[RMDB]
RNA sequence: GGGAACGACUCGAGUAGAGUCGAAAAUCAGAUGAACGAGGAGAACAGCUAUAGGAAUACCGUUGAUGCAUUACACUAAACAUUUGAAAGAUGUAAUACGUCAUUUGGUGUUCCUAUAGUUACCCGUAAUCACAGCGUCAUUCGUGACGCUGUGAUUAAAAGAAACAACAACAACAAC
Reactivity to 2A3 in 0.01 (KOAc 150mM, MgCl2 10mM, bicine 150mM(pH8.5), 24C), signal-to-noise 1, nucleotides 027 to 126: u080c040a000g030a040u300g020a110a040c010g050a170g110g000a120g150a160a020c020a010g000c020u000a020u010a000g000g000a000a000u000a020c000c000g000u010u010g000a000u000g010c000a000u000u000a000c000a010c000u110a010a150a000c160a120u050u160u280g200a190a140a000g060a090u000g000u000a000a000u010a000c000g000u000c000a030u100u090u300g000g000u000g000u000u000c000c020u010a000u000a000g000u000u000a000c000c010c010g030u130
Reactivity to DMS in 0.01 (KOAc 150mM, MgCl2 10mM, bicine 150mM(pH8.5), 24C), signal-to-noise 1, nucleotides 027 to 126: u010c050a070g010a020u010g030a110a070c140g000a080g000g010a270g000a060a140c290a080g010c010u000a020u000a000g000g000a020a000u000a000c000c000g040u000u000g010a000u020g000c040a020u000u000a000c060a020c010u010a140a070a070c120a170u030u000u000g000a080a020a080g010a130u000g000u000a000a000u000a020c000g050u000c000a000u000u000u030g090g030u000g040u000u000c000c000u000a000u000a000g000u000u000a050c010c000c010g000u020
An RNA of 177 nucleotides, treated with 2A3 and DMS and read out base by base. For 2A3 the reverse transcriptase was SuperScript II with manganese. Source: RMDB libraries RFM100 and RFMREP, as collected in RNAgym. 2A3 is a SHAPE reagent: it acylates the 2'-hydroxyl of flexible nucleotides of all four kinds. The reactions ran in a buffer of 150 mM KOAc, 10 mM MgCl2 and 150 mM bicine (pH 8.5), at 24 C.